[RMDB]
An RNA of 177 nucleotides, treated with 2A3 and DMS and read out base by base. For DMS, 19,872 sequencing reads were counted. For 2A3, 16,334 sequencing reads were counted. For DMS the reverse transcriptase was MarathonRT. The reactions ran in a buffer of 150 mM KOAc, 10 mM MgCl2 and 150 mM bicine (pH 8.5), at 24 C.
RNA sequence: GGGAACGACUCGAGUAGAGUCGAAAAGGUGAGGGUGGCACAUGGAACUUCACGGGUCACUGGGGGCCCACUCUUCCAGGGUCAUCGAUGCAUCCUGGGCUGUGCUGAGGCAGUGCUGUCUCGCUCAUGUUCACAACUUAUUCGUAAGUUGUGAACAAAAAGAAACAACAACAACAAC
Reactivity to 2A3 in 0.01 (KOAc 150mM, MgCl2 10mM, bicine 150mM(pH8.5), 24C), signal-to-noise 9, nucleotides 027 to 126: g080g010u080g040a050g020g030g040u080g030g030c030a020c030a120u100g040g050a090a060c020u130u060c090a040c090g020g000g000u040c040a060c190u140g050g000g000g040g000c000c020c000a030c030u080c000u100u020c010c000a010g010g000g010u020c020a060u120c150g140a070u160g030c050a010u020c000c000u010g000g030g000c050u070g010u030g030c070u100g010a040g050g010c030a020g030u070g130c070u030g020u010c010u000c010g010c010u060c040a060
Reactivity to DMS in 0.01 (KOAc 150mM, MgCl2 10mM, bicine 150mM(pH8.5), 24C), signal-to-noise 6, nucleotides 027 to 126: g000g020u000g010a070g000g010g020u010g010g000c060a040c070a090u020g020g020a070a080c130u010u000c100a120c140g010g010g000u010c020a080c080u010g000g010g000g000g000c030c020c020a100c090u020c110u000u020c010c030a020g010g010g000u000c030a080u020c130g010a110u020g000c110a040u000c010c000u010g000g000g010c140u010g020u000g000c050u020g000a040g000g010c040a060g010u020g000c090u000g010u010c010u000c020g000c040u010c070a140